Conditions: 150 mM KOAc, 10 mM MgCl2 and 150 mM bicine (pH 8.5), 24 C. Structure probing data (DMS and 2A3) for a 207-nucleotide construct. Reactivities are given for positions 27 through 156. 2A3 adducts were read by reverse transcription with SuperScript II with manganese. Source: RMDB library OK3TST, as collected in RNAgym.
RNA sequence: GGGAACGACUCGAGUAGAGUCGAAAACUCAAUCACUACGGUGAUUGAGAAUGCUUACGCCUCAAUCAAGCUUGAUUUGAGUGCCUCUAGCAGAUAUAGACUGAAACAUUUAGUAUGGUCAAGCAGGGAGCAACAGCUCGAGUACGCUCGAGCUGAAACUGAGCUAAAAUUUCGAUUUUAGCUCAGUAAAAGAAACAACAACAACAAC
Reactivity to DMS in 0.01 (KOAc 150mM, MgCl2 10mM, bicine 150mM(pH8.5), 24C), signal-to-noise 3, nucleotides 027 to 156: c030u000c010a020a000u000c000a020c010u000a120c300g080g010u000g010a010u010u000g020a010g010a070a050u000g010c020u000u010a080c110g010c030c000u000c020a040a050u000c030a130a240g010c150u000u000g010a050u000u000u010g010a050g020u020g020c020c070u000c070u000a070g040c020a120g000a100u000a140u000a110g000a130c030u000g030a100a080a070c040a060u010u000u000a100g010u000a060u000g010g000u000c010a050a070g000c030a100g010g020g010a120g020c010a070a170c020a050g000c020u000c000g020a050g030u000a090c300g040c020u010c000g000a010g020c010u000g010a020a060
Reactivity to 2A3 in 0.01 (KOAc 150mM, MgCl2 10mM, bicine 150mM(pH8.5), 24C), signal-to-noise 6, nucleotides 027 to 156: c000u000c010a010a000u000c000a000c010u050a020c280g100g000u000g000a000u000u000g000a000g010a030a070u050g010c000u070u070a060c220g010c010c000u000c010a010a030u030c030a070a090g240c120u170u120g040a040u080u070u170g010a010g030u200g010c000c010u020c020u010a000g010c020a000g110a020u160a020u060a070g060a020c030u050g060a060a140a020c030a050u080u170u060a070g040u050a060u160g030g000u040c010a020a010g020c020a030g050g010g040a040g010c020a020a090c000a020g000c000u000c000g000a000g010u020a020c190g010c100u010c000g000a000g000c000u010g000a010a000